[RMDB]
RNA sequence: GGGAACGACUCGAGUAGAGUCGAAAAUAAAGGUUGCGUAGAAGCUUUGACAGUGAUGUUGAGUGGAGCAGCCUUUAGUGCAGAUCUUGGUGGAAGUAGCAAAUAUUCAAGUGGGAUCCUUGAAGACGAAUGUAUGUGUGUUCGCACACAUACAUUCAAAAGAAACAACAACAACAAC
Reactivity to 2A3 in 0.01 (KOAc 150mM, MgCl2 10mM, bicine 150mM(pH8.5), 24C), signal-to-noise 3, nucleotides 027 to 126: u020a000a000a000g000g000u010u010g000c020g030u200a010g010a020a000g010c040u160u140u260g030a010c010a020g030u060g100a070u020g020u010u010g020a000g020u040g000g010a010g000c000a000g000c010c000u000u000u000a010g000u030g010c010a020g020a120u030c030u050u120g120g070u080g020g080a070a020g010u040a020g040c050a010a070a110u120a070u080u070c010a020a020g020u040g050g020g010a040u040c000c010u030u050g030a060a020g030a040c090
Reactivity to DMS in 0.01 (KOAc 150mM, MgCl2 10mM, bicine 150mM(pH8.5), 24C), signal-to-noise 5, nucleotides 027 to 126: u010a010a010a010g010g020u000u000g020c000g010u010a170g010a160a200g000c010u000u010u000g050a000c010a010g000u010g000a100u010g020u000u010g010a010g000u000g000g000a070g010c010a010g000c010c000u000u000u000a010g020u010g010c100a090g000a050u000c040u000u000g010g020u000g000g010a070a080g010u000a050g010c080a060a060a100u000a100u000u000c020a020a030g000u000g010g010g010a110u000c080c010u000u000g010a020a040g010a090c230